Overview
The data come from the RNA Mapping Database (RMDB), library OK1LIB. This 177-nucleotide RNA was probed chemically with DMS and 2A3. The DMS profile rests on 730 reads.
RNA sequence: GGGAACGACUCGAGUAGAGUCGAAAACGAGGUGGCGGACGACCAAACCGACGUAUUGUACGCCAAGAUACAACACCCGCGGCACCUGCCCGACGACGAUCCCAUCUAUGACACCGUUGGGGGGUACGCGGAAGGGCAUAUUCGUAUGCCCUUCCGCAAAAGAAACAACAACAACAAC
Reactivity to DMS in 0.01 (KOAc 150mM, MgCl2 10mM, bicine 150mM(pH8.5), 24C), signal-to-noise 1, nucleotides 027 to 126: c090g080a040g120g000u000g000g000c000g000g000a000c080g000a190c140c230a130a050a080c190c030g230a260c300g000u020a000u000u000g000u000a000c060g070c200c140a100a010g000a170u030a060c300a160a050c230a090c290c050c050g070c000g060g000c130a000c000c000u060g000c000c000c000g050a000c060g000a260c130g000a020u020c000c000c090a140u050c100u010a050u010g000a200c300a140c070c000g030u000u050g000g060g050g000g000g000u000a000c100
Reactivity to 2A3 in 0.01 (KOAc 150mM, MgCl2 10mM, bicine 150mM(pH8.5), 24C), signal-to-noise 2, nucleotides 027 to 126: c060g020a050g030g060u080g050g020c050g070g030a050c010g030a010c080c010a110a030a020c070c090g010a060c020g040u050a090u120u160g000u040a000c040g000c040c060a020a090g020a060u160a040c030a080a020c000a180c060c000c010g010c000g000g010c060a010c060c020u190g200c050c000c000g000a010c000g010a010c100g070a070u100c090c000c000a000u090c020u100a150u220g030a060c000a010c000c030g000u040u050g010g000g000g030g010g040u010a010c060